[RMDB]
RNA sequence: GGGAACGACUCGAGUAGAGUCGAAAAGAGUCACACAUGAAACACUACCCGUCAGUGACUGUGACCCUCACUCCGGGAGGAGGACACCGGUAGCCGGGCAGUUUGACUGGGGCGGUACGCGCUUGAAGAAGACGACUGAAUUCGUUCAGUCGUCUUCAAAAGAAACAACAACAACAAC
Reactivity to DMS in 0.01 (KOAc 150mM, MgCl2 10mM, bicine 150mM(pH8.5), 24C), signal-to-noise 2, nucleotides 027 to 126: g010a040g000u000c040a050c030a130c170a160u030g030a110a070a110c100a120c060u000a040c020c060c000g000u000c030a100g030u000g010a030c060u020g010u000g000a120c000c010c050u020c050a100c040u010c010c010g030g020g010a180g000g000a030g030g010a120c070a040c040c060g000g030u020a100g000c080c060g010g010g030c070a030g020u010u000u000g000a090c040u000g000g020g000g000c020g020g000u010a050c070g000c070g000c040u000u000g020a170a070
Reactivity to 2A3 in 0.01 (KOAc 150mM, MgCl2 10mM, bicine 150mM(pH8.5), 24C), signal-to-noise 3, nucleotides 027 to 126: g060a000g050u120c020a010c000a010c020a100u300g120a060a130a000c060a040c020u080a090c030c000c000g120u060c010a030g010u010g060a020c030u030g020u060g040a120c000c020c000u060c020a090c020u040c000c020g040g040g020a060g010g010a060g000g030a010c000a040c080c030g020g000u020a030g010c000c030g030g020g000c030a000g030u000u030u190g090a090c030u070g010g010g020g010c030g010g010u110a030c050g030c020g000c000u010u020g000a070a030
Description:
Source: RMDB libraries RFM100 and RFMREP, as collected in RNAgym. This 177-nucleotide RNA was probed chemically with DMS and 2A3.